[RMDB]
RNA sequence: GGGAACGACUCGAGUAGAGUCGAAAAGAAAGAAGACGGCAAGCGAUGUGCAAAACUUUAUCCUACACACUUAAUGGAAUUACUGCCAUGUGUGGACUAAUCUCCGCUUAUUAUCUGAUGCUUUUAAGCCUGAUAAAAUUUUCGAAUUUUAUCAGGCAAAAGAAACAACAACAACAAC
Reactivity to DMS in 0.01 (KOAc 150mM, MgCl2 10mM, bicine 150mM(pH8.5), 24C), signal-to-noise 5, nucleotides 027 to 126: g000a090a080a100g010a090a060g000a090c100g020g010c040a030a050g010c040g000a080u010g000u010g020c090a070a070a080a060c080u010u000u020a090u000c030c010u010a070c020a030c060a050c080u020u030a190a030u000g000g000a060a080u010u030a110c210u020g010c000c000a020u020g020u000g020u000g010g010a070c110u010a050a050u030c100u010c040c040g020c030u010u010a070u020u010a070u010c090u030g020a090u030g000c020u000u010u010u010a050a230
Reactivity to 2A3 in 0.01 (KOAc 150mM, MgCl2 10mM, bicine 150mM(pH8.5), 24C), signal-to-noise 8, nucleotides 027 to 126: g050a010a050a000g050a010a020g050a020c040g020g020c030a030a020g030c030g070a090u090g040u060g090c050a040a030a040a070c020u060u070u060a070u050c010c020u090a020c020a000c000a010c030u100u280a060a040u100g020g030a020a050u190u130a150c040u080g050c010c000a020u020g010u000g010u020g010g010a020c030u070a030a080u050c030u010c040c020g020c030u050u070a040u070u030a030u110c060u080g070a090u170g100c020u060u020u000u090a070a040
Chemical mapping of a 177-nucleotide RNA with DMS and 2A3. The RNA was probed in 150 mM KOAc, 10 mM MgCl2 and 150 mM bicine (pH 8.5) at 24 C. It was measured as part of the RMDB libraries RFM100 and RFMREP.